[RMDB]
An RNA of 177 nucleotides, treated with DMS and 2A3 and read out base by base. The data come from the RNA Mapping Database (RMDB), libraries RFM100 and RFMREP.
RNA sequence: GGGAACGACUCGAGUAGAGUCGAAAAUCGACUGUACUUGAACAGGAUUCAUACUUCAGUUGGUAAACCCUCGUCAGUAUUCUCCAAUACUUGACAAGCUCCUCAUGUCAGACGAAGACUGAAGCUCUCAUUCUUGCUUUUUCGAAAGCAAGAAUGAAAAAGAAACAACAACAACAAC
Reactivity to DMS in 0.01 (KOAc 150mM, MgCl2 10mM, bicine 150mM(pH8.5), 24C), signal-to-noise 6, nucleotides 027 to 126: u000c010g000a020c000u010g000u010a010c060u010u000g000a030a110c080a210g010g000a270u010u000c030a060u020a130c080u010u000c010a010g010u000u010g020g020u010a060a090a130c030c000c020u010c100g000u000c010a050g000u000a010u010u010c160u020c280c220a070a020u010a010c020u000u020g030a030c030a100a080g000c040u000c040c050u010c060a110u000g020u010c040a110g010a070c080g000a070a120g010a030c020u000g000a020a030g000c100u010c080
Reactivity to 2A3 in 0.01 (KOAc 150mM, MgCl2 10mM, bicine 150mM(pH8.5), 24C), signal-to-noise 9, nucleotides 027 to 126: u100c000g010a010c000u040g040u100a010c000u020u040g020a060a020c030a090g080g060a180u070u070c040a040u070a090c010u020u020c010a010g010u020u030g040g020u080a060a080a090c010c000c000u020c040g010u000c000a010g010u000a020u040u070c120u030c140c030a030a010u010a030c000u090u130g000a010c000a020a010g030c020u050c020c010u060c030a060u130g040u030c020a020g030a180c040g060a080a010g010a010c010u020g020a020a010g010c010u000c000
Values cover nucleotides 27 to 126. Conditions: 150 mM KOAc, 10 mM MgCl2 and 150 mM bicine (pH 8.5), 24 C. For DMS the reverse transcriptase was MarathonRT.